[RMDB]
RNA sequence: GGGAACGACUCGAGUAGAGUCGAAAAUGGGUGAGUUUAAGCGCCAAGACCUGGUGUAUGAGAAAGAAGAUCUGUUGAUCUCGGGUCCGGGUAAAUAUCCGGAAUAUAACUUUUACCGGAUGGCCGAUCGGACGGUAUUAUUCGUAAUACCGUCCGAAAAAGAAACAACAACAACAAC
Reactivity to DMS in 0.01 (KOAc 150mM, MgCl2 10mM, bicine 150mM(pH8.5), 24C), signal-to-noise 1, nucleotides 027 to 126: u000g020g000g040u000g010a120g000u000u000u020a090a160g000c100g000c070c030a090a070g000a080c150c020u000g000g050u000g000u000a020u020g010a180g020a050a090a120g000a140a110g000a020u000c010u010g020u010u000g010a020u000c010u000c030g000g000g000u000c030c060g020g000g000u010a030a070a120u010a050u000c000c010g030g000a090a030u000a020u010a060a140c110u000u000u000u000a100c030c000g000g000a050u000g000g020c020c040g000a130

Overview: This 177-nucleotide RNA was probed chemically with DMS. The DMS profile rests on 1,034 reads.